[RMDB]
RNA sequence: GGGAACGACUCGAGUAGAGUCGAAAAGAGCUCGGUACCUAGGAUGAGUACAGAGCCAUGCAUGGCUGGAUCGAUCACGCUAGGCAUGCUGAUCCUAGACAUGAGAGUGGAUCUGGAUCUCAGAGCAGACCUACCCAUCUUUCGAGAUGGGUAGGUCAAAAGAAACAACAACAACAAC
Reactivity to DMS in 0.01 (KOAc 150mM, MgCl2 10mM, bicine 150mM(pH8.5), 24C), signal-to-noise 2, nucleotides 027 to 126: g010a170g000c020u000c000g010g020u000a110c030c020u000a130g030g010a220u000g000a050g020u000a160c000a020g000a030g010c010c000a030u000g020c020a030u000g010g010c000u010g000g000a030u000c090g000a080u000c020a020c120g000c020u030a110g000g040c060a050u000g010c200u000g010a020u010c020c000u000a020g010a050c020a030u010g000a050g000a160g030u010g010g000a030u010c020u000g000g000a150u000c030u000c030a070g020a070g030c070a140
Reactivity to 2A3 in 0.01 (KOAc 150mM, MgCl2 10mM, bicine 150mM(pH8.5), 24C), signal-to-noise 2, nucleotides 027 to 126: g030a020g010c000u000c030g010g040u110a070c010c020u030a060g110g100a210u090g040a000g020u030a030c000a000g040a020g030c000c000a010u020g010c000a000u020g000g000c010u000g040g000a100u030c030g020a060u110c030a020c070g020c020u100a090g150g250c020a030u120g000c010u010g010a010u000c000c020u060a030g020a050c020a020u060g010a020g010a000g030u050g030g000a050u010c010u010g060g030a120u100c010u020c020a020g010a020g000c000a010